[RMDB]
RNA sequence: GGGAACGACUCGAGUAGAGUCGAAAAGGAACUAUGUAACCACAGAAAGGCAUGAGUCCCUCUGAGUACAAUGUGCCUUACUGUUUGUGGUUCUGUGGGGUUAAUUCAAUGGGCAGGGAAAUUCUCACUUGCUUAGGAGCUCUGGGCACCUGGGCCACCUCCGACUGAUAUUCGUAUCAGUCGGAGGAAAAGAAACAACAACAACAAC
Reactivity to 2A3 in 0.01 (KOAc 150mM, MgCl2 10mM, bicine 150mM(pH8.5), 24C), signal-to-noise 1, nucleotides 027 to 156: g010g000a100a010c020u140a070u220g130u300a080a020c000c010a040c010a000g090a010a040a000g010g000c000a050u080g000a000g110u070c010c130c020u170c190u270g110a150g070u040a060c030a050a160u150g000u050g010c040c000u000u040a140c080u030g080u150u090u140g010u020g000g000u000u000c040u030g030u030g010g000g000g000u080u170a130a030u170u050c080a030a140u150g000g000g000c080a050g040g000g000a030a030a020u170u090c090u000c030a080c060u080u020g000c010u060u000a010g000g090a060g010c050u050c300u280g000g130g000c000a080c060c000u000g040g000g000c030c010a010